[RMDB]
RNA sequence: GGGAACGACUCGAGUAGAGUCGAAAAACUUACCAUUGUGUUACAAUUGCCUACAGUAUUCAGUACAGUAACAUGCUGUACAGGUGUGUGGCCUAGGAGCAACAGGCUACACCAUACAGCUCAGGUGAUCUCCAUCUGUCUUCGGACAGAUGGAGAUAAAAGAAACAACAACAACAAC
Reactivity to DMS in 0.01 (KOAc 150mM, MgCl2 10mM, bicine 150mM(pH8.5), 24C), signal-to-noise 2, nucleotides 027 to 126: a090c190u010u010a100c050c000a210u020u000g000u000g010u020u000a030c060a060a080u010u000g010c030c020u000a060c130a060g010u000a050u010u010c190a100g020u000a050c060a100g020u000a060a150c090a060u010g000c010u000g000u020a000c140a060g000g010u010g020u000g000u010g010g030c020c000u000a060g000g020a110g020c240a090a070c120a040g000g000c010u000a000c000a000c010c040a160u010a010c020a010g000c040u000c110a070g020g000u000g000
Reactivity to 2A3 in 0.01 (KOAc 150mM, MgCl2 10mM, bicine 150mM(pH8.5), 24C), signal-to-noise 3, nucleotides 027 to 126: a000c070u130u150a080c010c000a130u070u190g060u020g060u080u040a060c060a210a170u100u110g020c010c010u030a060c040a110g070u070a130u060u270c050a050g060u050a030c000a000g010u010a090a070c050a110u170g000c000u000g010u030a030c030a100g150g060u130g010u030g010u020g060g030c000c000u090a140g110g130a180g140c060a020a100c010a040g000g000c010u000a000c010a000c000c000a010u030a020c010a030g010c010u020c060a020g000g040u030g050